[RMDB]
Structure probing data (DMS and 2A3) for a 177-nucleotide construct. Reactivities are given for positions 27 through 126. The data come from the RNA Mapping Database (RMDB), library OK1LIB. For 2A3, 1,601 sequencing reads were counted.
RNA sequence: GGGAACGACUCGAGUAGAGUCGAAAAUAUAGACAUUACUUUCCAUUGUUCACUGCGAUUACGUCGUUUGCAUCUUUAGCAUGGAUGUCUGAAGACUUAAGACUGAUGGCACUCUGCUGGGGUAUGAGAGUAGUUGUCAGUUCGCUGACAACUACUCAAAAGAAACAACAACAACAAC
Reactivity to DMS in 0.01 (KOAc 150mM, MgCl2 10mM, bicine 150mM(pH8.5), 24C), signal-to-noise 1, nucleotides 027 to 126: u070a100u090a070g000a080c120a080u030u010a030c020u000u000u030c060c090a150u020u010g000u040u000c010a030c040u000g060c090g000a030u010u010a030c090g000u040c040g000u000u050u000g000c170a060u000c100u010u000u010a010g000c110a060u030g010g000a080u010g020u000c060u030g010a010a000g040a100c080u060u040a100a060g040a060c000u030g040a110u000g000g000c080a010c010u000c030u040g000c000u000g030g030g000g000u040a060u000g010a170
Reactivity to 2A3 in 0.01 (KOAc 150mM, MgCl2 10mM, bicine 150mM(pH8.5), 24C), signal-to-noise 3, nucleotides 027 to 126: u290a030u050a010g200a020c080a100u030u060a120c010u040u020u000c050c000a020u000u200g050u080u050c040a010c090u070g000c020g070a080u050u110a180c110g000u040c010g000u030u120u050g020c020a040u000c020u040u070u070a070g000c050a050u070g010g090a110u040g070u030c020u020g060a060a040g000a040c050u070u160a060a030g080a070c020u040g000a030u050g010g000c040a030c020u000c010u000g000c000u010g000g000g030g020u080a110u090g140a120